Structure probing data (DMS and 2A3) for a 177-nucleotide construct. The reactions ran in a buffer of 150 mM KOAc, 10 mM MgCl2 and 150 mM bicine (pH 8.5), at 24 C.
[RMDB]
RNA sequence: GGGAACGACUCGAGUAGAGUCGAAAAAUCUGCAUAUUCGUUUCUGUGUUAUCCAAAGACCGUGAUUUUAUUUCUAGAACAAUUGAUUCACUGGGGUCAAUCCAUUCGGCAGGUAUUUUUGAGCCAACCUAUAAUGGUAGUUCGCUACCAUUAUAGGAAAAGAAACAACAACAACAAC
Reactivity to DMS in 0.01 (KOAc 150mM, MgCl2 10mM, bicine 150mM(pH8.5), 24C), signal-to-noise 4, nucleotides 027 to 126: a060u010c050u010g010c060a030u020a060u020u010c060g010u000u000u000c000u000g020u010g020u000u000a080u000c090c060a060a100a080g010a060c080c030g010u010g000a070u030u000u010u020a030u010u030u010c040u000a080g000a100a070c120a030a090u020u010g000a040u000u000c020a050c050u010g010g000g030g000u000c010a060a220u010c040c030a080u010u010c060g000g000c010a080g000g010u020a020u010u000u000u010u010g000a140g000c010c030a050a150
Reactivity to 2A3 in 0.01 (KOAc 150mM, MgCl2 10mM, bicine 150mM(pH8.5), 24C), signal-to-noise 9, nucleotides 027 to 126: a000u050c040u070g040c020a060u070a150u180u160c070g020u040u050u000c040u040g090u000g040u100u080a080u060c040c040a080a060a030g060a050c010c030g020u030g060a060u010u080u080u120a110u050u140u040c080u070a060g050a110a040c050a090a090u060u100g020a030u060u040c020a020c100u090g080g000g000g040u010c020a010a030u000c010c040a040u070u050c020g030g000c030a040g020g070u070a160u050u150u010u070u130g020a020g010c010c020a010a020